[RMDB]
RNA sequence: GGGAACGACUCGAGUAGAGUCGAAAACAGUUUAAAGUUCAUCCAAUUCAUGAAUAUAUCGCAGGAACAGCUCCUAAGCCAAGUGAUGAAUAUUCUUGCUCUCCGAAUGGAUGGAUGUAUGAUAAGCACCAAGAAGGUAUCAUUCCAAAGGAAAUCGUGAAGAGUUCAAUUUCGAUUGAACUCUUCAAAAAGAAACAACAACAACAAC
Reactivity to 2A3 in 0.01 (KOAc 150mM, MgCl2 10mM, bicine 150mM(pH8.5), 24C), signal-to-noise 2, nucleotides 027 to 156: c020a020g010u050u080u140a030a060a000g000u020u020c000a000u000c000c000a160a160u020u000c020a020u050g110a170a020u120a010u040a020u180c030g040c020a030g020g010a050a060c020a040g010c000u000c020c070u030a070a000g030c040c020a090a040g020u020g100a090u020g000a110a040u090a040u070u010c010u000u020g040c010u000c000u000c100c020g070a040a030u000g000g000a000u010g000g000a000u030g020u030a010u040g050a040u010a060a010g020c030a020c140c000a060a030g050a040a020g030g030u050a050u160c020a050u060u080c020c030a070a000a000g000g040a070a100a080u130c080g000
Reactivity to DMS in 0.01 (KOAc 150mM, MgCl2 10mM, bicine 150mM(pH8.5), 24C), signal-to-noise 2, nucleotides 027 to 156: c060a080g030u020u010u000a010a070a300g010u010u000c020a000u000c010c010a140a180u000u000c030a020u000g040a090a070u000a250u000a090u000c030g040c040a050g000g020a050a030c020a080g010c020u000c020c040u010a090a150g040c150c080a090a240g020u000g020a140u010g000a100a300u000a090u010u010c010u000u000g000c020u000c080u000c130c020g000a110a100u020g010g000a040u020g000g040a070u000g000u010a010u000g010a190u020a050a110g010c010a120c020c020a020a110g000a140a100g020g010u000a020u000c090a160u010u000c030c040a030a090a090g000g020a090a090a160u000c070g000
An RNA of 207 nucleotides, treated with 2A3 and DMS and read out base by base. It was measured as part of the RMDB library OK3TST. For 2A3, 1,044 sequencing reads were counted. 2A3 adducts were read by reverse transcription with SuperScript II with manganese.